[RMDB]
RNA sequence: GGGAACGACUCGAGUAGAGUCGAAAAGAUAUGGACGGUCGCGAAACGAACUACACGACUUAUCGGAAACGAUAAGCGUGCGGAGACCGUCCUAAGUCAAAGGCUUCCGCCUUCGGGCGGAAGCCAACACUACCGAUACGUUCGCGUAUCGGUAGUGAAAAGAAACAACAACAACAAC
Reactivity to DMS in 0.01 (KOAc 150mM, MgCl2 10mM, bicine 150mM(pH8.5), 24C), signal-to-noise 2, nucleotides 027 to 126: g010a040u000a270u000g020g000a000c010g020g000u010c000g020c080g010a050a060a160c160g000a140a130c100u000a300c010a010c020g000a150c000u000u000a000u000c000g000g010a090a090a110c010g020a020u000a000a000g000c000g000u010g040c080g010g000a230g010a020c010c010g000u000c000c000u000a000a060g020u000c060a090a090a100g020g010c000u000u000c000c000g030c000c010u000u010c180g040g010g030c000g000g010a000a030g000c000c010a020a030
Reactivity to 2A3 in 0.01 (KOAc 150mM, MgCl2 10mM, bicine 150mM(pH8.5), 24C), signal-to-noise 2, nucleotides 027 to 126: g010a000u040a010u070g000g010a010c000g010g010u000c030g040c140g130a180a210a090c080g060a130a160c120u250a020c200a000c060g300a300c010u000u000a000u000c000g040g000a060a020a020c030g000a010u000a000a000g010c020g020u000g060c050g000g020a130g000a040c000c000g000u000c000c000u010a000a000g000u010c000a040a120a000g020g010c040u000u020c020c000g090c020c030u100u150c300g060g010g010c000g000g000a000a000g000c000c000a010a000